[RMDB]
An RNA of 177 nucleotides, treated with 2A3 and DMS and read out base by base. For 2A3 the reverse transcriptase was SuperScript II with manganese. Conditions: 150 mM KOAc, 10 mM MgCl2 and 150 mM bicine (pH 8.5), 24 C. For DMS the reverse transcriptase was MarathonRT.

RNA sequence: GGGAACGACUCGAGUAGAGUCGAAAAGAAGUGGUAGAAAAGCAUAUUGCAGGCCAUGCGAUAAGCCGUCUCACAAUUUGUGUGGUUAUUACUAUGCUUAUUGCUGUUGCCGUAAAUGUGCGGUGCGCAUUGCAUUUUUCUUCGGAAAAAUGCAAUGAAAAGAAACAACAACAACAAC
Reactivity to 2A3 in 0.01 (KOAc 150mM, MgCl2 10mM, bicine 150mM(pH8.5), 24C), signal-to-noise 5, nucleotides 027 to 126: g100a050a030g040u060g100g070u220a090g100a070a160a010a010g000c010a010u030a000u030u080g040c150a040g000g000c000c000a020u110g010c000g010a010u000a020a000g000c000c040g100u010c020u040c020a040c010a120a220u120u220u210g060u020g010u010g050g100u100u060a090u150u060a100c090u060a080u290g000c000u010u010a010u030u000g000c020u080g100u270u160g000c000c010g000u040a000a030a010u030g000u000g000c010g000g020u060g000c060g010
Reactivity to DMS in 0.01 (KOAc 150mM, MgCl2 10mM, bicine 150mM(pH8.5), 24C), signal-to-noise 8, nucleotides 027 to 126: g010a080a100g010u000g010g020u000a060g010a070a080a100a190g020c000a020u000a020u000u000g000c150a300g010g010c020c050a020u000g000c000g010a010u010a010a020g030c010c300g010u010c080u000c010a020c020a070a150u010u000u010g020u000g020u000g000g010u000u010a090u010u020a070c180u000a060u000g000c000u000u000a020u000u000g000c010u000g010u000u010g010c000c010g000u000a140a040a030u000g010u000g010c000g000g010u010g010c120g000
The DMS profile rests on 9,616 reads.
The data come from the RNA Mapping Database (RMDB), library RFMREP.